Structure probing data (2A3 and DMS) for a 177-nucleotide construct.
The data come from the RNA Mapping Database (RMDB), library OK1LIB.
The reactions ran in a buffer of 150 mM KOAc, 10 mM MgCl2 and 150 mM bicine (pH 8.5), at 24 C.
For 2A3 the reverse transcriptase was SuperScript II with manganese.
RNA sequence: GGGAACGACUCGAGUAGAGUCGAAAAAUUAUCACUUGAAACUGAUAGUUAUUCAGAGUGAUUGAGGCCAUCCACCCACAGUGUGUCCACCUAGAGUGCACCCAGCACAAAAUGGGAGCCAGACAGAGGACAGGUCUAAUUUCGAUUAGACCUGUCCAAAAGAAACAACAACAACAAC
Reactivity to 2A3 in 0.01 (KOAc 150mM, MgCl2 10mM, bicine 150mM(pH8.5), 24C), signal-to-noise 3, nucleotides 027 to 126: a020u180u120a010u010c010a000c000u020u020g020a050a020a000c010u020g050a130u110a130g130u050u120a100u100u000c000a050g030a010g220u010g000a020u030u050g050a030g040g050c020c010a030u030c050c020a000c020c030c000a040c020a030g160u050g000u000g000u100c010c000a020c000c020u110a080g040a020g130u080g000c000a060c000c040c000a040g030c050a060c070a070a110a020a000u040g050g000g010a010g010c000c000a060g020a170c000a040g100a090
Reactivity to DMS in 0.01 (KOAc 150mM, MgCl2 10mM, bicine 150mM(pH8.5), 24C), signal-to-noise 2, nucleotides 027 to 126: a040u050u000a030u000c000a000c000u060u000g020a080a060a080c130u040g050a050u050a070g040u000u030a080u060u010c060a000g000a010g020u000g000a020u000u010g020a050g000g000c020c050a050u050c030c110a030c060c000c060a000c130a180g010u000g030u010g030u000c030c030a180c000c060u010a050g000a060g040u000g010c010a050c000c020c000a100g000c020a100c140a010a050a070a170u020g030g000g000a100g050c050c080a090g010a070c070a050g000a280